[RMDB]
RNA sequence: GGGAACGACUCGAGUAGAGUCGAAAAGAUAUGGAUACUACCUCCGAUAAGAUGCCAUCGGAAACGAUGGGCAUCUUUUGACGGAGAUAGUAUCCUAAGUCAAAAGGCAAUAGUUCGCUAUUGCCAACGCUUUGGAUAAGUUCGCUUAUCCAAAGCGAAAAGAAACAACAACAACAAC
Reactivity to DMS in 0.01 (KOAc 150mM, MgCl2 10mM, bicine 150mM(pH8.5), 24C), signal-to-noise 1, nucleotides 027 to 126: g000a010u000a080u030g000g000a020u000a000c000u000a010c000c010u000c000c000g030a150u030a010a020g000a020u000g000c000c000a030u000c000g030g000a020a010a040c000g030a010u000g000g000g020c010a000u000c000u010u000u010u000g010a220c120g000g000a020g000a000u000a000g000u000a010u000c000c000u000a010a040g020u000c000a120a090a160a110g000g000c000a010a000u000a010g020u000u030c300g010c020u000a000u020u010g020c000c000a010a050
Reactivity to 2A3 in 0.01 (KOAc 150mM, MgCl2 10mM, bicine 150mM(pH8.5), 24C), signal-to-noise 1, nucleotides 027 to 126: g010a000u020a000u030g000g020a000u000a000c010u010a010c010c010u000c010c000g090a170u170a300a010g000a000u040g060c040c000a010u020c020g020g000a010a000a000c000g000a010u070g080g100g000c010a000u000c020u020u010u020u060g140a040c060g000g000a000g010a010u000a000g000u000a000u010c000c000u000a000a000g010u000c010a060a090a040a160g000g060c010a010a030u010a020g000u060u120c300g000c190u000a000u010u000g010c010c000a000a000
An RNA of 177 nucleotides, treated with DMS and 2A3 and read out base by base.
Conditions: 150 mM KOAc, 10 mM MgCl2 and 150 mM bicine (pH 8.5), 24 C.
DMS adducts were read by reverse transcription with MarathonRT.